[RMDB]
The record gives the reactivity of an RNA of 177 nucleotides to DMS and 2A3. Source: RMDB library M2PK50, as collected in RNAgym. The 2A3 profile rests on 2,137 reads. For DMS the reverse transcriptase was MarathonRT. Reactivities are given for positions 27 through 126. For 2A3 the reverse transcriptase was SuperScript II with manganese. For DMS, 836 sequencing reads were counted.
RNA sequence: GGGAACGACUCGAGUAGAGUCGAAAACACACGUGCUUCGGCACGUGUGAAACCUAGUCAAAAUAACGCAAGACUACGAAAGCGUAAGUACGAAAGUACAAAAAAGGUGAGUGUUCGCACUCACCAAGACCUAGUGGAUGUUCGCAUCCACUAGGUCAAAAGAAACAACAACAACAAC
Reactivity to DMS in 0.01 (KOAc 150mM, MgCl2 10mM, bicine 150mM(pH8.5), 24C), signal-to-noise 1, nucleotides 027 to 126: c000a010c000a000c000g060u000g000c000u000u000c290g070g010c000a000c000g040u000g000u000g000a030a040a250c010c000u000a020g000u000c040a030a050a030a060u000a050a040c010g000c010a140a140g070a080c050u000a060c300g000a120a080a100g000c010g020u000a050a190g000u000a000c000g000a150a050a090g010u010a000c000a000a030a030a150a030a040g000g020u000g000a040g070u000g000u000u000c170g000c000a010c000u010c000a010c000c000a010a030
Reactivity to 2A3 in 0.01 (KOAc 150mM, MgCl2 10mM, bicine 150mM(pH8.5), 24C), signal-to-noise 2, nucleotides 027 to 126: c010a000c000a010c020g020u010g010c000u070u040c070g060g000c000a000c000g000u020g020u000g000a010a000a000c020c000u000a000g070u060c060a010a030a060a220u180a190a000c010g030c030a210a050g010a080c040u110a090c190g160a130a020a010g020c020g010u030a120a060g010u020a020c000g080a190a020a020g020u000a010c020a020a110a000a010a020a010g040g000u000g000a000g000u020g020u070u160c280g030c140a000c000u000c000a000c010c000a000a000